[RMDB]
RNA sequence: GGGAACGACUCGAGUAGAGUCGAAAAUGGUGAGGCGUCUGUCUGUGCGUUUCGCGGAUCCUGGGCUCUGCCUGCGCCUCUCCGAGAGUCGACGCCUGCGCUCGCCUCUUCUCUCUGAGGCACAGUGUAAAUAUCAUCGGUUCGCCGAUGAUAUUUAAAAAGAAACAACAACAACAAC
Reactivity to 2A3 in 0.01 (KOAc 150mM, MgCl2 10mM, bicine 150mM(pH8.5), 24C), signal-to-noise 8, nucleotides 027 to 126: u210g030g010u050g030a030g010g020c020g030u040c070u110g050u010c030u050g080u090g030c060g090u050u050u200c060g000c020g010g010a040u060c020c040u070g010g030g000c030u050c060u200g030c010c010u020g010c010g010c010c000u000c000u000c010c000g020a030g000a000g070u040c020g010a030c080g040c010c010u040g010c030g010c030u030c040g010c000c000u010c000u100u010c050u030c030u000c040u040g010a020g000g030c020a020c040a050g040u050g020
Reactivity to DMS in 0.01 (KOAc 150mM, MgCl2 10mM, bicine 150mM(pH8.5), 24C), signal-to-noise 6, nucleotides 027 to 126: u040g010g020u010g010a090g000g010c010g000u010c060u010g020u030c050u010g000u010g020c060g010u000u020u010c050g010c020g000g000a070u000c070c050u010g000g000g000c040u030c090u020g000c020c040u010g000c030g000c030c010u000c010u000c050c040g000a140g000a030g010u000c030g000a060c170g010c030c030u000g010c030g010c030u010c130g010c020c010u000c010u010u010c050u020c070u010c080u010g000a060g000g010c020a070c140a030g020u010g020
About this RNA
Structure probing data (2A3 and DMS) for a 177-nucleotide construct. 2A3 is a SHAPE reagent: it acylates the 2'-hydroxyl of flexible nucleotides of all four kinds. The reactions ran in a buffer of 150 mM KOAc, 10 mM MgCl2 and 150 mM bicine (pH 8.5), at 24 C. For DMS, 20,537 sequencing reads were counted. Source: RMDB library OK1LIB, as collected in RNAgym. Reactivities are given for positions 27 through 126.